[RMDB]
RNA sequence: GGGAACGACUCGAGUAGAGUCGAAAAGUUGCCAAUAAGUAGAGCACCAAAGGCACACGUUGAAGCUAUCAACUGGUUUCUCGAUGAUUGUGUAAACGGGACCACGUCUCUCGAUUUUUAUCACCUAUCCAAUACGACGAUUCGUCGUCGUAUUGGAAAAAGAAACAACAACAACAAC
Reactivity to DMS in 0.01 (KOAc 150mM, MgCl2 10mM, bicine 150mM(pH8.5), 24C), signal-to-noise 4, nucleotides 027 to 126: g020u000u000g010c030c040a100a070u010a060a080g020u000a090g000a090g030c300a080c040c070a020a150a210g010g000c000a080c060a090c070g010u010u010g000a090a180g000c040u000a050u000c060a050a090c130u000g020g020u010u010u000c020u000c070g010a130u000g000a050u000u000g000u010g020u010a060a070a050c080g000g000g020a130c060c050a070c150g000u010c040u000c020u000c030g010a090u000u000u000u000u000a050u010c090a150c120c040u000a130
Reactivity to 2A3 in 0.01 (KOAc 150mM, MgCl2 10mM, bicine 150mM(pH8.5), 24C), signal-to-noise 2, nucleotides 027 to 126: g020u030u030g090c020c000a020a080u170a120a070g160u130a000g060a000g060c020a040c050c020a050a040a030g050g000c020a010c000a010c130g040u050u030g090a090a010g020c030u050a070u170c010a030a070c080u070g060g120u100u190u070c120u000c060g050a060u030g020a010u060u090g080u010g040u170a020a090a040c020g000g000g010a010c040c020a060c080g030u010c000u000c000u020c020g080a060u060u050u020u030u080a090u090c060a060c050c000u060a110